This 177-nucleotide RNA was probed chemically with 2A3 and DMS. For DMS the reverse transcriptase was MarathonRT. The reactions ran in a buffer of 150 mM KOAc, 10 mM MgCl2 and 150 mM bicine (pH 8.5), at 24 C. The DMS profile rests on 9,034 reads. Values cover nucleotides 27 to 126.

[RMDB]
RNA sequence: GGGAACGACUCGAGUAGAGUCGAAAAAUUGCAACAGGGCCGAAGCGUGCGAGACGAUACCUGCAGAACAAGCACCGGCCAACAACGUACCAGCGGCCGAGGAAAGACGCAGGAUACGAGCGCAUCAAAAUAAAAUAAAUUUCGAUUUAUUUUAUUUAAAAGAAACAACAACAACAAC
Reactivity to 2A3 in 0.01 (KOAc 150mM, MgCl2 10mM, bicine 150mM(pH8.5), 24C), signal-to-noise 4, nucleotides 027 to 126: a000u060u100g020c030a090a050c040a160g030g020g080c020c010g050a070a010g040c010g030u040g010c020g010a040g050a070c030g010a010u100a140c020c000u020g020c010a040g050a170a060c070a110a020g060c030a060c050c000g010g000c020c010a020a030c020a010a020c030g120u080a060c020c040a020g040c040g030g000c020c000g020a070g020g060a090a040a010g020a020c020g010c010a010g000g010a010u040a030c010g000a020g030c030g000c010a020u080c040a060
Reactivity to DMS in 0.01 (KOAc 150mM, MgCl2 10mM, bicine 150mM(pH8.5), 24C), signal-to-noise 5, nucleotides 027 to 126: a100u000u020g010c080a080a110c130a120g010g030g000c060c030g000a100a060g020c090g020u000g000c010g000a110g000a080c040g000a100u000a110c010c010u000g010c000a090g010a090a080c160a030a100g000c140a180c050c010g000g000c010c010a070a140c140a090a110c110g000u020a080c120c110a100g010c220g000g010c010c010g000a050g000g000a200a110a040g000a080c130g010c000a020g000g010a070u000a030c030g010a200g000c010g010c020a020u030c070a050